[RMDB]
RNA sequence: GGGAACGACUCGAGUAGAGUCGAAAAUACGACGCCGUCGGCGGGCAGCCGCAGAACGAAUGGACCACCUACCGGCUGUCUGGCCCGGAUUUGGUGGCACUGGCCGGACCCCGCUGAUCCCCGGCGCAUCGUGGUGAGGCUUCGGCCUCACCACGAUAAAAGAAACAACAACAACAAC
Reactivity to 2A3 in 0.01 (KOAc 150mM, MgCl2 10mM, bicine 150mM(pH8.5), 24C), signal-to-noise 1, nucleotides 027 to 126: u170a030c060g030a010c010g000c000c010g020u090c010g010g050c000g030g000g020c030a050g090c000c000g000c030a130g020a100a030c130g170a020a060u170g170g070a120c000c000a050c010c000u080a060c030c000g030g020c110u020g200u300c190u210g060g000c000c000c000g030g030a000u230u080u130g020g000u000g000g000c010a030c030u050g070g000c040c000g110g000a150c040c040c000c040g000c040u030g000a090u060c050c000c000c000g000g010c020g000c000